[RMDB]
RNA sequence: GGGAACGACUCGAGUAGAGUCGAAAACUUUGAACGUUCGCGUUCAAAGAAACCUCUAAGCAGAUUGGCGAGGACGACGCUGCGGAGCGCGUUUGCCAUUAAAAAGCGUAGGCUUCGGCCUACGCAAUCUCAGUAUUCUGUUCGCAGAAUACUGAGAAAAAGAAACAACAACAACAAC
Reactivity to DMS in 0.01 (KOAc 150mM, MgCl2 10mM, bicine 150mM(pH8.5), 24C), signal-to-noise 3, nucleotides 027 to 126: c000u000u000u010g010a010a020c000g010u010u010c200g010c010g020u000u000c010a000a000a000g010a080a130a110c020c010u010c120u000a060a110g010c180a080g000a070u000u000g010g040c030g000a080g020g000a150c020g010a080c020g020c000u000g020c270g010g000a030g020c020g020c010g000u000u000u000g010c000c010a050u010u010a030a050a050a140a090g000c010g010u000a010g000g000c000u000u010c200g000g000c000c000u000a000c000g000c020a010a020
Reactivity to 2A3 in 0.01 (KOAc 150mM, MgCl2 10mM, bicine 150mM(pH8.5), 24C), signal-to-noise 3, nucleotides 027 to 126: c000u040u010u010g000a000a000c000g000u040u040c220g000c010g080u000u020c030a000a010a000g000a040a020a000c040c020u040c080u130a140a100g070c050a040g070a300u100u120g060g000c020g030a100g130g000a050c020g060a080c010g000c020u170g080c090g170g120a040g000c070g000c010g000u000u010u080g070c000c000a060u090u150a070a060a030a030a010g000c000g010u000a010g000g000c000u030u030c250g060g010c000c000u000a000c000g000c000a000a000

An RNA of 177 nucleotides, treated with DMS and 2A3 and read out base by base. Reactivities are given for positions 27 through 126. The data come from the RNA Mapping Database (RMDB), library M2PK50. For DMS, 2,517 sequencing reads were counted. The reactions ran in a buffer of 150 mM KOAc, 10 mM MgCl2 and 150 mM bicine (pH 8.5), at 24 C. For 2A3, 3,096 sequencing reads were counted. For 2A3 the reverse transcriptase was SuperScript II with manganese. For DMS the reverse transcriptase was MarathonRT.